[RMDB]
RNA sequence: GGGAACGACUCGAGUAGAGUCGAAAAGUGAUUGAGAAGGGCCACGCCCCCUUCGUGUGACGCACGGCGGGCGACGGCGGCGCCGUGCCCGGCAUUGGUUGGGUGUCAAUGAGGCUUCAAGGAUAUCAUCUGGGAAUAGGUUCGCCUAUUCCCAGAUAAAAGAAACAACAACAACAAC
Reactivity to 2A3 in 0.01 (KOAc 150mM, MgCl2 10mM, bicine 150mM(pH8.5), 24C), signal-to-noise 1, nucleotides 027 to 126: g060u040g020a050u080u110g050a110g020a060a090g000g030g020c050c000a070c030g030c000c000c000c000c000u010u050c040g040u050g020u020g110a070c050g000c020a000c020g020g000c030g000g000g000c080g060a110c040g070g090c000g030g050c030g040c000c000g020u010g000c010c000c010g000g010c000a040u110u200g160g050u110u080g060g070g000u070g050u150c040a030a180u140g030a050g050g000c000u090u080c060a060a120g070g020a040u070a030u200c020
Reactivity to DMS in 0.01 (KOAc 150mM, MgCl2 10mM, bicine 150mM(pH8.5), 24C), signal-to-noise 3, nucleotides 027 to 126: g030u000g010a060u000u010g000a300g000a070a080g010g000g010c050c030a200c110g000c040c050c010c010c010u010u000c010g020u000g010u000g010a120c270g020c020a030c020g000g000c060g020g020g020c040g010a060c170g010g010c060g030g010c070g010c020c010g030u000g010c010c030c030g010g000c040a080u000u000g010g000u010u000g010g000g010u000g020u010c090a050a120u000g010a110g010g020c030u000u000c050a060a120g010g000a110u000a040u010c080
Record summary:
This 177-nucleotide RNA was probed chemically with 2A3 and DMS. 2A3 adducts were read by reverse transcription with SuperScript II with manganese. Conditions: 150 mM KOAc, 10 mM MgCl2 and 150 mM bicine (pH 8.5), 24 C. The 2A3 profile rests on 985 reads. Reactivities are rounded to 0.1 and cut off at 0 and 3. It was measured as part of the RMDB library OK2TST.